[RMDB]
RNA sequence: GGGAACGACUCGAGUAGAGUCGAAAACUGUGUGCUGUACUGAUGUAUUUGUGUUUACCUACAUUUUCUAUGGCACCUGUUGAAUUUUAUGAAGACCGCAUCUUGGACUUUAAAGUUCUUGAUAAUGUAAGCUGAGCCUUCGGGCUCAGCAAAAGAAACAACAACAACAAC
Reactivity to 2A3 in 0.01 (KOAc 150mM, MgCl2 10mM, bicine 150mM(pH8.5), 24C), signal-to-noise 3, nucleotides 027 to 129: c000u000g030u030g000u000g250c000u010g030u000a010c010u000g010a000u000g000u010a140u000u270u130g190u000g180u100u300u110a000c000c000u020a020c030a050u020u030u000u000c060u020a000u000g000g070c000a000c040c000u000g000u000u010g040a050a080u040u000u120u170a200u080g060a030a000g050a220c070c020g040c090a040u000c000u020u030g020g000a000c000u000u100u110a130a300a000g050u000u000c020u000u000g030a000u060a140a010u050g030u040a100a000
Reactivity to DMS in 0.01 (KOAc 150mM, MgCl2 10mM, bicine 150mM(pH8.5), 24C), signal-to-noise 2, nucleotides 027 to 129: c040u020g000u060g100u020g030c060u040g070u000a060c050u050g000a050u010g010u010a000u140u120u000g010u020g040u010u050u060a000c090c110u000a000c000a040u000u000u070u040c210u040a060u030g000g030c000a000c010c030u010g020u040u050g000a100a040u040u000u060u000a130u060g040a110a020g010a040c120c030g000c130a000u000c000u080u030g000g000a010c000u000u100u060a140a150a050g020u030u040c020u000u000g010a000u060a070a160u040g000u070a090a050